[RMDB]
Source: RMDB library M2PK50, as collected in RNAgym. This 177-nucleotide RNA was probed chemically with 2A3 and DMS. The 2A3 profile rests on 2,918 reads. Values cover nucleotides 27 to 126.
RNA sequence: GGGAACGACUCGAGUAGAGUCGAAAACCGCUACUCUUCGGAGUAGCGGAUACAUCUCGGGUCCGGGCCUUACCGUAGGACCAACGGUAAGGCCAGAGAAGAAGGGAGAGAUUUUCGAAUCUCUCAAUUUGAAAAAGUGAUUCGUCACUUUUUCAAAAAAAGAAACAACAACAACAAC
Reactivity to 2A3 in 0.01 (KOAc 150mM, MgCl2 10mM, bicine 150mM(pH8.5), 24C), signal-to-noise 2, nucleotides 027 to 126: c000c000g020c000u000a000c000u000c020u010u100c280g130g000a000g000u000a000g000c010g010g000a000u000a010c040a090u030c010u000c000g000g050g040u020c050c040g040g000g000c010c020u000u000a000c000c010g010u010a050g060g290a060c000c020a000a000c010g000g000u010a000a000g000g000c000c020a000g000a010g010a050a050g070a030a030g100g110g010a000g000a000g000a010u010u000u050u120c180g050a050a000u000c000u000c000u000c020a030a090
Reactivity to DMS in 0.01 (KOAc 150mM, MgCl2 10mM, bicine 150mM(pH8.5), 24C), signal-to-noise 4, nucleotides 027 to 126: c010c000g010c000u000a010c000u000c000u000u000c180g010g000a030g020u000a010g000c000g010g010a010u000a030c180a100u000c010u000c010g010g010g010u010c030c080g000g020g010c000c000u000u000a000c000c000g010u000a040g020g020a110c150c140a020a020c000g000g000u000a010a010g000g010c000c000a000g000a050g010a090a110g000a130a100g010g010g000a010g000a020g000a010u000u000u000u010c130g010a030a020u000c000u000c010u000c010a030a040